RNA sequence: GGGAACGACUCGAGUAGAGUCGAAAAAGUGUGUGGGAAGAUCCAACUGACUUAAGUGAAUCCACAACAUGGGAAAGAUUCAAAUAUUACAUUGAUAGCUUCCAUCUCAAAAUUGAUCUCAUAGUACUACCGGAGCAAUUUUCGAAUUGCUCCGGUAAAAAGAAACAACAACAACAAC
Reactivity to DMS in 0.01 (KOAc 150mM, MgCl2 10mM, bicine 150mM(pH8.5), 24C), signal-to-noise 1, nucleotides 027 to 126: a120g050u000g000u040g020u020g000g000g000a100a050g030a140u080c020c090a110a060c030u000g000a110c270u090u060a160a050g000u000g070a030a030u000c000c050a090c080a080a030c070a030u030g000g000g000a000a000a090g020a000u000u040c100a130a060a010u050a030u070u050a070c170a040u060u010g000a000u010a100g020c020u000u030c000c010a000u020c100u000c000a050a000a070a140u000u000g020a160u010c000u030c030a070u030a090g010u050a080c050
Reactivity to 2A3 in 0.01 (KOAc 150mM, MgCl2 10mM, bicine 150mM(pH8.5), 24C), signal-to-noise 2, nucleotides 027 to 126: a000g120u110g020u020g000u000g130g020g050a120a090g040a100u050c000c140a030a030c040u070g260a110c000u200u120a150a000g050u000g080a010a070u000c020c000a020c000a080a050c000a040u020g030g030g030a000a080a080g030a050u060u120c020a000a020a000u240a120u140u140a070c080a070u000u090g020a020u060a090g020c000u010u020c000c040a020u010c020u000c030a000a120a160a190u030u230g010a060u000c050u030c060a140u120a090g080u060a040c030